[RMDB]
RNA sequence: GGGAACGACUCGAGUAGAGUCGAAAACUGCGUCGCCGCCUUGGCCAGUCAGUAUUGCCGACAGUCGCGUUGCUGACGAUCACGGUCGCGUCGAUCGUGUGGACGGUGUUGCGCAACGUGCCUGGGAGGUGCGUAAAUGGUUCGCCAUUUACGCACCAAAAGAAACAACAACAACAAC
Reactivity to DMS in 0.01 (KOAc 150mM, MgCl2 10mM, bicine 150mM(pH8.5), 24C), signal-to-noise 3, nucleotides 027 to 126: c030u000g000c070g010u000c170g000c010c010g020c150c070u010u000g010g010c040c070a210g010u000c050a060g000u000a070u010u000g020c020c020g020a210c060a040g000u000c010g000c010g000u000u000g010c000u000g000a080c010g000a090u000c010a000c040g000g010u000c050g010c290g000u010c140g010a000u000c000g000u000g020u000g010g020a100c150g010g000u020g000u000u010g010c130g010c010a020a020c030g000u000g000c060c010u020g000g000g000a180
Reactivity to 2A3 in 0.01 (KOAc 150mM, MgCl2 10mM, bicine 150mM(pH8.5), 24C), signal-to-noise 4, nucleotides 027 to 126: c020u010g000c010g090u060c050g000c020c010g040c030c090u160u190g050g010c030c020a050g070u110c010a010g030u020a100u080u200g100c020c010g060a090c040a050g050u090c070g020c010g030u010u030g000c020u050g030a040c010g020a020u010c000a000c010g000g030u020c020g040c150g300u240c130g010a030u010c010g000u020g000u050g110g050a060c090g030g100u150g030u080u090g020c040g000c010a000a010c000g020u020g000c010c010u010g030g030g070a090